[RMDB]
An RNA of 207 nucleotides, treated with 2A3 and read out base by base. The reactions ran in a buffer of 150 mM KOAc, 10 mM MgCl2 and 150 mM bicine (pH 8.5), at 24 C. For 2A3 the reverse transcriptase was SuperScript II with manganese.
RNA sequence: GGGAACGACUCGAGUAGAGUCGAAAAAGUGAGAGGAGGAGUCCUGUGUAUGUCGUUGUCAACGUCGACCGAGCGUCCGUGCCAAGCGCUGCGUCACCAGGGGAUGACUGUCGGAAGAUGGUCAGUCCCGGGUGCAUAAGGAGUGGUGGAUGGUUCACCCAGUAUCGUGGUUCGCCACGAUACUGGGAAAAGAAACAACAACAACAAC
Reactivity to 2A3 in 0.01 (KOAc 150mM, MgCl2 10mM, bicine 150mM(pH8.5), 24C), signal-to-noise 1, nucleotides 027 to 156: a020g120u100g000a050g020a010g030g000a000g000g000a040g040u080c000c010u030g000u070g050u070a150u050g040u000c050g020u050u040g090u050c020a030a050c040g030u020c010g080a050c050c030g000a020g030c010g010u000c010c010g020u100g040c020c000a040a010g010c050g000c010u040g070c050g060u150c010a010c000c000a020g000g060g000g000a000u050g000a000c000u000g000u000c000g080g120a070a060g010a100u010g010g030u000c010a030g030u040c000c000c010g000g000g000u010g000c030a040u060a130a050g030g010a020g000u000g000g010u080g010g010a050u020g020g080u000u030c030a080
It was measured as part of the RMDB library ARCHII.